[RMDB]
RNA sequence: GGGAACGACUCGAGUAGAGUCGAAAAAGGUGACUGAAGAUAUACAUCUGUGCUAAAGGGGUCACUGGCUCCUUGCAGUUACUUCAUGAUUCCCCAUGGUUUCUACUGGUUGGGAUCUACUACCUUAGACUUACACACUACUCCUGACCCCUUUCAACAUACCCGUGGACUUCGGUCCACGGGUAUGAAAAGAAACAACAACAACAAC
Reactivity to 2A3 in 0.01 (KOAc 150mM, MgCl2 10mM, bicine 150mM(pH8.5), 24C), signal-to-noise 1, nucleotides 027 to 156: a000g110g010u050g000a050c070u040g020a060a050g040a090u140a000u120a170c050a120u070c110u180g100u180g120c040u190a000a000a060g000g030g000g010u020c060a080c300u270g010g000c000u020c000c020u010u090g020c000a000g000u020u020a030c000u020u010c010a050u170g010a050u020u030c020c000c000c020a060u100g080g000u110u140u280c090u050a110c100u020g020g020u030u220g090g020g010a040u000c070u110a080c040u050a020c050c000u090u070a020g000a000c020u100u300a040c070a020c020a000c050u110a030c010u010c030c010u020g040a060c010c010c010c000u000u090u020c040a060a060